[RMDB]
RNA sequence: GGGAACGACUCGAGUAGAGUCGAAAACUAGGGAGAACUAGCUCAGGGAGGCUACCAAUCAAUGAACUGAUAUCUGAAUCUGGGUCAUACCCUGAAACAGUUACAUCGCUGCUAAAGUCAGUAAAGAGGUCUCCCCAAGGUUCGCCUUGGGGAGACCAAAAGAAACAACAACAACAAC
Reactivity to 2A3 in 0.01 (KOAc 150mM, MgCl2 10mM, bicine 150mM(pH8.5), 24C), signal-to-noise 1, nucleotides 027 to 126: c080u100a100g030g000g040a100g050a010a000c010u000a020g020c030u010c100a000g000g130g000a000g000g060c010u090a130c070c000a040a130u160c010a000a110u140g010a170a000c000u040g080a050u120a060u150c040u040g050a100a000u100c100u010g010g000g010u010c020a050u230a190c000c000c000u100g000a000a000a000c000a000g010u020u030a130c090a000u040c020g000c060u080g000c000u100a040a000a030g010u190c030a000g000u000a000a180a000g090a040

Chemical mapping of a 177-nucleotide RNA with 2A3. For 2A3, 446 sequencing reads were counted. Values cover nucleotides 27 to 126. The RNA was probed in 150 mM KOAc, 10 mM MgCl2 and 150 mM bicine (pH 8.5) at 24 C.